RNA sequence: GGGAACGACUCGAGUAGAGUCGAAAAUAAGAGUUCGGGCUCUGGGGAUAGUAUGCUCGCAAGGGUGAAAAUUAAAGAAAUUGACGGAGCUACACCACAAGGAGUGGAUUGUGCGGCUUAAUUUGACCUACUGAUAUUAUUUCGAUAAUAUCAGUAGAAAAGAAACAACAACAACAAC
Reactivity to 2A3 in 0.01 (KOAc 150mM, MgCl2 10mM, bicine 150mM(pH8.5), 24C), signal-to-noise 8, nucleotides 027 to 126: u080a020a020g030a020g050u080u100c040g020g040g000c010u020c020u060g020g000g010g010a020u010a050g050u060a070u210g040c010u010c020g040c060a040a050g070g030g010u100g050a090a060a050a050u150u130a070a080a060g120a050a090a060u090u090g040a040c080g030g010a020g000c000u030a020c010a020c020c010a020c030a060a050g110g010a080g060u040g020g020a080u080u110g030u030g060c060g010g000c020u060u100a040a040u110u070u140g050a040c000
Reactivity to DMS in 0.01 (KOAc 150mM, MgCl2 10mM, bicine 150mM(pH8.5), 24C), signal-to-noise 9, nucleotides 027 to 126: u040a080a100g000a070g010u010u010c090g020g000g010c020u010c040u010g010g000g010g010a090u010a070g010u010a060u020g010c020u000c030g010c140a060a090g010g000g020u010g000a050a060a060a090u020u040a060a070a110g010a050a060a070u010u010g000a070c080g010g010a080g020c020u010a060c060a070c030c020a030c060a100a110g010g010a140g010u000g000g000a100u000u000g010u000g010c060g000g000c040u010u000a030a070u010u010u000g000a180c200